[RMDB]
RNA sequence: GGGAACGACUCGAGUAGAGUCGAAAAGAUAUGGACUGUACGCGACGAUAAGCUGGUGUCGGAAACGACACGCAGCUUUUGACGUCGGUACAGUCCUAAGUCAAAGGCAUCGCUUCGGCGAUGCCAACAUUCGAGCUAGGUUCGCCUAGCUCGAAUGAAAAGAAACAACAACAACAAC
Reactivity to DMS in 0.01 (KOAc 150mM, MgCl2 10mM, bicine 150mM(pH8.5), 24C), signal-to-noise 2, nucleotides 027 to 126: g000a010u000a060u020g000g010a010c000u000g010u000a000c010g000c000g010a010c010g000a130u010a010a010g030c000u000g000g020u010g000u000c010g010g010a030a020a040c000g000a010c000a000c000g040c000a030g020c020u000u000u000u010g010a200c090g010u000c010g030g010u000a010c010a020g000u000c000c010u000a010a030g010u000c010a130a140a110g020g020c000a000u000c000g010c010u000u030c270g010g000c010g020a000u000g030c010c000a030a050
Reactivity to 2A3 in 0.01 (KOAc 150mM, MgCl2 10mM, bicine 150mM(pH8.5), 24C), signal-to-noise 2, nucleotides 027 to 126: g000a000u020a000u020g010g000a020c020u030g020u040a010c110g100c030g300a010c020g120a220u070a300a000g000c010u020g040g010u000g000u000c010g000g040a030a010a010c020g020a000c010a030c060g090c010a020g010c000u050u000u010u020g130a040c040g000u010c020g000g000u020a000c010a000g000u020c000c000u000a000a000g010u000c000a000a020a140g000g000c010a000u000c020g020c080u130u240c300g120g020c010g020a000u010g000c000c000a010a010

Chemical mapping of a 177-nucleotide RNA with DMS and 2A3. For DMS the reverse transcriptase was MarathonRT. For DMS, 2,831 sequencing reads were counted. The reactions ran in a buffer of 150 mM KOAc, 10 mM MgCl2 and 150 mM bicine (pH 8.5), at 24 C.